[RMDB]
RNA sequence: GGGAACGACUCGAGUAGAGUCGAAAAUGCGACGCCAUUAUUUGCCGAAGAUGCUUAUAGCAAUUUGCUGGACAAACUCACUGCUUCUUCACCGGUAGUGAAAAAUGAUACACUUCUGACGCUAUUAAAUCGGGCCAUCAUUCGUGAUGGCCCGAUUAAAAGAAACAACAACAACAAC
Reactivity to 2A3 in 0.01 (KOAc 150mM, MgCl2 10mM, bicine 150mM(pH8.5), 24C), signal-to-noise 2, nucleotides 027 to 126: u050g000c060g020a030c000g040c000c000a020u070u120a070u030u140u110g020c000c010g020a040a000g060a040u120g030c020u070u200a030u130a170g000c050a130a260u080u070u200g040c060u040g000g000a120c000a010a090a040c030u000c010a010c000u020g000c030u030u060c000u020u070c060a030c050c020g000g000u040a000g030u050g000a130a010a000a000a040u030g000a030u060a090c110a050c100u060u020c000u070g080a120c020g000c030u000a000u120u120a050
Chemical mapping of a 177-nucleotide RNA with 2A3.
For 2A3, 608 sequencing reads were counted.